[RMDB]
RNA sequence: GGGAACGACUCGAGUAGAGUCGAAAACUGCUUUGGUAAAAGAACUGCGUGAGCGUACUGCCGCAGGCAUGAUGGAAUGUAAAAAGGCGUUGGUUGAAGCUAACGGCGACAUCGAGCUUGCCAUCGACAGUGAGAAGACCUUCGGGUCUUCUCACUGAAAAGAAACAACAACAACAAC
Reactivity to DMS in 0.01 (KOAc 150mM, MgCl2 10mM, bicine 150mM(pH8.5), 24C), signal-to-noise 1, nucleotides 027 to 126: c030u000g010c090u020u000u000g000g020u000a090a050a170a090g000a050a130c020u000g000c030g000u000g020a150g010c080g000u000a170c160u000g000c020c020g000c080a020g010g000c030a040u020g000a040u000g000g000a080a090u010g020u020a010a030a060a140a090g010g000c000g000u000u000g000g000u000u010g000a060a110g010c060u000a000a030c010g000g020c020g040a090c050a030u000c000g000a100g010c050u000u000g000c000c000a060u010c080g000a060
Reactivity to 2A3 in 0.01 (KOAc 150mM, MgCl2 10mM, bicine 150mM(pH8.5), 24C), signal-to-noise 1, nucleotides 027 to 126: c010u020g060c060u070u100u060g000g010u010a000a120a120a040g090a160a060c020u030g000c040g140u200g080a120g000c090g020u130a120c120u210g000c010c010g040c040a020g060g000c000a020u180g020a030u080g030g160a240a080u220g060u220a040a060a060a040a070g090g000c000g080u030u000g090g060u040u180g230a030a000g050c010u030a070a000c050g150g000c000g090a000c000a000u030c000g000a040g030c000u010u020g010c000c000a010u000c000g060a070